Chemical mapping of a 177-nucleotide RNA with 2A3 and DMS. Conditions: 150 mM KOAc, 10 mM MgCl2 and 150 mM bicine (pH 8.5), 24 C. For DMS the reverse transcriptase was MarathonRT. Values are in units of 0.01, from 0 to 300, in steps of 10. Reactivities are given for positions 27 through 126.
RNA sequence: GGGAACGACUCGAGUAGAGUCGAAAAAGCCGUCGCAGUACGCUGCGACGGCAAUCAUCUUGACCUGUCUGGCACCUGUCUUUACACCUGUCAGUGACAGAACACGCCCGAAAGUUCAAGAGAGAAAGUUUAACUCAAGGUUCGCCUUGAGUUAAACAAAAGAAACAACAACAACAAC
Reactivity to 2A3 in 0.01 (KOAc 150mM, MgCl2 10mM, bicine 150mM(pH8.5), 24C), signal-to-noise 3, nucleotides 027 to 126: a000g010c020c000g000u000c000g000c010a040g020u120a030c280g100c140u020g000c010g000a010c010g000g010c000a000a000u050c010a020u000c000u000u000g000a000c000c000u030g060u100c020u010g010g020c000a010c050c050u000g010u000c010u080u190u150a130c160a090c130c090u150g060u070c030a030g000u030g160a000c000a000g020a060a030c090a050c210g000c000c000c010g060a060a030a000g000u000u000c000a000a000g000a000g030a000g070a030a110a000
Reactivity to DMS in 0.01 (KOAc 150mM, MgCl2 10mM, bicine 150mM(pH8.5), 24C), signal-to-noise 1, nucleotides 027 to 126: a010g000c060c000g040u010c080g010c000a000g060u000a020c220g030c010u000g010c060g040a010c020g000g000c000a000a010u010c000a120u000c000u000u000g010a010c070c060u010g000u010c000u000g000g000c020a090c170c010u010g010u000c100u000u010u100a190c110a120c090c080u000g000u000c100a060g010u000g000a020c000a000g000a080a050c200a200c250g000c000c000c020g010a040a010a000g030u000u000c000a010a030g000a050g000a110g010a220a120a090